Structure probing data (DMS and 2A3) for a 177-nucleotide construct. Reactivities are given for positions 27 through 126. Conditions: 150 mM KOAc, 10 mM MgCl2 and 150 mM bicine (pH 8.5), 24 C. Values are in units of 0.01, from 0 to 300, in steps of 10. Source: RMDB library 15KREP, as collected in RNAgym.
[RMDB]
RNA sequence: GGGAACGACUCGAGUAGAGUCGAAAAUCAUGGAUAAUGCUAUUAAUGUUGGUGGUACAGGAUUACAGUAUGCCGCCAUUACUGCACCUUAUGUAGUUCUCACUGGCUUAGGUGAGUCCUUUAAGAAGAGUGUUAAACUGUUCGCAGUUUAACACUCAAAAGAAACAACAACAACAAC
Reactivity to DMS in 0.01 (KOAc 150mM, MgCl2 10mM, bicine 150mM(pH8.5), 24C), signal-to-noise 3, nucleotides 027 to 126: u000c030a020u000g010g010a100u010a110a170u010g000c020u000a050u010u010a020a030u000g020u000u000g010g040u000g040g050u010a030c060a090g010g010a170u020u010a110c150a080g020u000a020u010g000c010c000g020c070c030a030u010u000a010c100u000g000c020a050c090c030u000u010a030u000g000u010a060g010u000u010c010u010c010a030c030u000g020g000c210u010u010a060g000g010u010g000a050g000u000c040c010u000u000u000a050a090g010a080a120
Reactivity to 2A3 in 0.01 (KOAc 150mM, MgCl2 10mM, bicine 150mM(pH8.5), 24C), signal-to-noise 4, nucleotides 027 to 126: u040c010a040u040g010g000a040u030a160a030u110g020c070u100a030u160u050a100a010u040g030u080u010g040g000u050g060g000u000a010c010a040g080g090a190u110u200a060c010a030g050u040a020u060g000c010c010g000c000c000a000u000u030a010c010u010g010c010a020c030c020u070u080a050u090g100u050a020g030u040u000c030u000c000a010c010u050g140g050c090u100u180a040g010g010u000g020a010g020u020c030c010u130u140u070a060a050g050a080a020